[RMDB]
RNA sequence: GGGAACGACUCGAGUAGAGUCGAAAACAUAACUUUACUUACCCCUGACCAUUGUUUUUACAGGGUUCGCCUAACAUGCAAAUGCGGAGUAGUGCUCCUAUGCGAUGGCGUGCUACUGAGGAGCAUACCAUACUGGGGCAUUCGUGCCCCAGUAUGGAAAAGAAACAACAACAACAAC
Reactivity to 2A3 in 0.01 (KOAc 150mM, MgCl2 10mM, bicine 150mM(pH8.5), 24C), signal-to-noise 7, nucleotides 027 to 126: c070a030u280a190a110c090u180u190u210a070c030u090u140a140c030c000c000c030u060g060a090c020c090a150u080u110g040u050u040u030u020u110a060c040a020g000g020g000u010u040c000g000c000c000u110a140a090c070a080u160g040c040a090a140a060u200g110c040g050g010a030g000u100a030g030u060g100c010u000c000c010u050a050u080g070c060g110a060u130g000g000c000g000u010g010c000u060a240c010u030g050a030g040g050a030g000c020a010u050a120
Reactivity to DMS in 0.01 (KOAc 150mM, MgCl2 10mM, bicine 150mM(pH8.5), 24C), signal-to-noise 2, nucleotides 027 to 126: c140a030u110a080a110c140u050u080u080a050c160u030u010a120c070c030c010c040u040g000a120c080c040a150u010u000g040u000u060u000u010u020a060c050a030g010g020g030u000u000c020g030c030c050u030a040a170c060a060u010g000c060a100a080a100u020g010c040g000g000a040g020u000a020g020u040g020c000u000c020c010u000a120u030g100c150g010a110u040g000g010c010g000u030g000c000u000a090c020u000g040a050g010g010a050g000c040a070u000a110
Chemical mapping of a 177-nucleotide RNA with 2A3 and DMS. For 2A3, 3,946 sequencing reads were counted. 2A3 adducts were read by reverse transcription with SuperScript II with manganese. It was measured as part of the RMDB library OK1LIB. The RNA was probed in 150 mM KOAc, 10 mM MgCl2 and 150 mM bicine (pH 8.5) at 24 C.